[RMDB]
RNA sequence: GGGAACGACUCGAGUAGAGUCGAAAAGAGGUAUUCGUACCUCAGAUGGGAAACGGGAGCCGGGCUUGGGACAAGAGCCAUCCCAAGUCCAAGGCCAAGUAGGCUCUGCUGGCGCCCUUCGGGGCGCACAGCUGAGACAGUUCGCUGUCUCAGCUGUAAAAGAAACAACAACAACAAC
Reactivity to DMS in 0.01 (KOAc 150mM, MgCl2 10mM, bicine 150mM(pH8.5), 24C), signal-to-noise 4, nucleotides 027 to 126: g010a030g000g020u000a020u000u020c170g020u000a010c000c000u000c010a060g010a160u010g000g000g010a050a090a090c130g010g000g010a200g010c050c040g020g010g010c010u000u010g000g010g020a000c050a080a060g010a030g010c040c030a300u010c000c000c000a010a020g000u000c010c020a050a040g040g010c030c100a060a060g010u010a120g000g000c010u000c010u000g010c180u000g010g010c000g010c000c000c000u010u010c120g030g010g000g010c000g030c010
Reactivity to 2A3 in 0.01 (KOAc 150mM, MgCl2 10mM, bicine 150mM(pH8.5), 24C), signal-to-noise 4, nucleotides 027 to 126: g010a000g010g000u010a030u070u150c190g020u060a040c000c000u000c000a000g040a080u160g010g000g050a090a130a060c090g020g040g060a050g040c030c020g030g010g000c010u010u000g000g010g000a010c030a090a060g000a000g040c000c010a000u010c010c000c000a000a010g000u000c010c010a040a010g020g000c030c010a070a010g120u110a100g060g010c000u010c020u040g040c060u070g080g000c010g010c000c000c000u000u020c170g010g000g000g000c000g000c010
Source: RMDB library RFMREP, as collected in RNAgym. Chemical mapping of a 177-nucleotide RNA with DMS and 2A3. The RNA was probed in 150 mM KOAc, 10 mM MgCl2 and 150 mM bicine (pH 8.5) at 24 C. For DMS, 4,572 sequencing reads were counted. Reactivities are given for positions 27 through 126. DMS adducts were read by reverse transcription with MarathonRT.